[RMDB]
RNA sequence: GGGAACGACUCGAGUAGAGUCGAAAACAGGGUGGUUUGCGACCGAACCGGCGGCACGUCCAGAGGGGAUCUGACAUGAUCUCGUUUGUCCUCGACGUUGCUGGUAAAACCCAAUCCAGUCUCCCGACGAAACUAAAAUCUUCGGAUUUUAGUUUCGAAAAGAAACAACAACAACAAC
Reactivity to 2A3 in 0.01 (KOAc 150mM, MgCl2 10mM, bicine 150mM(pH8.5), 24C), signal-to-noise 1, nucleotides 027 to 126: c060a010g070g020g070u030g030g030u030u040u010g040c090g070a080c000c010g030a040a040c020c000g020g030c020g070g000c070a000c020g010u050c020c070a000g020a040g010g000g000g010a020u000c010u050g130a080c030a200u290g020a030u010c000u030c070g070u080u160u140g090u080c020c020u040c010g020a030c010g020u050u110g000c010u000g000g010u030a040a020a030a050c020c010c000a000a040u000c000c000a020g290u020c000u020c060c010c000g010a060
Reactivity to DMS in 0.01 (KOAc 150mM, MgCl2 10mM, bicine 150mM(pH8.5), 24C), signal-to-noise 2, nucleotides 027 to 126: c200a110g000g000g010u000g010g010u000u000u000g020c110g000a110c060c040g000a210a060c030c040g010g000c010g030g010c060a010c020g020u010c030c100a060g020a040g000g020g000g000a000u000c000u000g020a120c300a070u000g000a000u000c010u000c030g010u000u010u000g010u010c200c070u010c050g000a060c030g010u000u020g030c010u020g000g000u000a040a040a060a170c040c040c010a040a090u000c010c010a030g000u000c040u000c000c000c010g020a290